[RMDB]
RNA sequence: GGGAACGACUCGAGUAGAGUCGAAAAGAUAUGGAACCAGAACUACAUCUGAGAACAGCGAUGAGUCGGAAACGACGAGCUGACAGAUGCUGGUUCCUAAGUCAAAAUCCACAGUUCGCUGUGGAAACCUCAUACUAUUCUUCGGAAUAGUAUGAGGAAAAGAAACAACAACAACAAC
Reactivity to 2A3 in 0.01 (KOAc 150mM, MgCl2 10mM, bicine 150mM(pH8.5), 24C), signal-to-noise 8, nucleotides 027 to 126: g020a020u070a010u140g000g010a000a000c000c010a010g020a080a040c160u270a050c210a010u000c010u030g080a100g130a300a100c010a010g010c010g300a300u230g080a170g060u010c010g020g020a070a050a050c010g000a000c020g030a020g000c010u010g050a080c000a000g010a000u010g000c000u000g000g000u010u000c000c000u000a020a010g010u000c010a010a000a020a300u000c000c000a000c000a000g040u120u140c190g030c170u010g000u000g000g000a040a020a010
Reactivity to DMS in 0.01 (KOAc 150mM, MgCl2 10mM, bicine 150mM(pH8.5), 24C), signal-to-noise 6, nucleotides 027 to 126: g010a040u000a300u010g010g010a010a010c000c000a010g010a100a030c090u020a300c010a000u000c000u010g010a150g000a120a130c020a000g000c010g010a140u010g010a180g010u010c010g010g000a060a070a150c010g010a000c000g000a130g020c000u000g030a140c010a000g000a000u000g010c000u000g000g010u000u000c000c000u000a010a050g010u000c030a090a060a100a130u000c000c000a010c000a010g010u000u010c250g010c000u000g010u000g000g000a010a050a070

Annotation: Conditions: 150 mM KOAc, 10 mM MgCl2 and 150 mM bicine (pH 8.5), 24 C. An RNA of 177 nucleotides, treated with 2A3 and DMS and read out base by base. The DMS profile rests on 8,743 reads. For DMS the reverse transcriptase was MarathonRT. Reactivities are given for positions 27 through 126.